[RMDB]
RNA sequence: GGGAACGACUCGAGUAGAGUCGAAAAUCUCGCCUUCGGGCGAGACUGCUAGGGGUCUGCGAGCUCAGAAGUCUGAUGACCCUGAAGCCUCCACGGGCAAGGAUUCUCGAGCGAUGAGCAGACGGAGGCACCCCGUCGUACAGUCUUCGGACUGUAACGUAUUAAAGUACUUCGGUACUUUAAUACGAAAAGAAACAACAACAACAAC
Reactivity to DMS in 0.01 (KOAc 150mM, MgCl2 10mM, bicine 150mM(pH8.5), 24C), signal-to-noise 3, nucleotides 027 to 156: u000c010u000c010g020c030c000u000u000c300g040g060g020c030g000a010g030a020c040u000g020c030u000a150g020g020g000g040u000c010u030g010c010g010a170g010c020u010c010a070g000a060a070g020u010c020u020g010a200u000g000a150c050c000c010u010g010a050a120g000c050c010u000c020c040a240c300g020g000g000c020a170a300g010g000a130u000u000c090u010c060g010a050g000c020g020a210u000g010a160g020c010a060g020a060c030g010g010a080g020g040c050a110c010c010c010c040g000u010c040g010u000a020c000a000g000u000c000u000u000c300g040g010a020c000u010g010u010a030a160
Reactivity to 2A3 in 0.01 (KOAc 150mM, MgCl2 10mM, bicine 150mM(pH8.5), 24C), signal-to-noise 5, nucleotides 027 to 156: u010c000u000c010g000c000c010u050u050c200g140g000g000c000g000a000g000a020c020u060g040c020u080a070g000g000g090g000u010c010u020g000c010g100a070g000c010u000c010a070g020a140a080g300u030c030u040g120a180u300g160a300c010c000c010u010g030a020a030g040c010c030u050c050c010a030c070g020g000g000c040a050a050g030g000a020u070u030c050u090c260g010a020g010c050g140a290u170g110a090g040c010a000g000a020c030g000g020a020g010g010c010a020c000c000c010c000g080u090c050g020u040a010c000a000g000u000c020u050u150c200g080g000a000c000u000g000u010a040a030
Chemical mapping of a 207-nucleotide RNA with DMS and 2A3. DMS adducts were read by reverse transcription with MarathonRT. The data come from the RNA Mapping Database (RMDB), library RNAMAK. 2A3 adducts were read by reverse transcription with SuperScript II with manganese. The RNA was probed in 150 mM KOAc, 10 mM MgCl2 and 150 mM bicine (pH 8.5) at 24 C. Values are in units of 0.01, from 0 to 300, in steps of 10.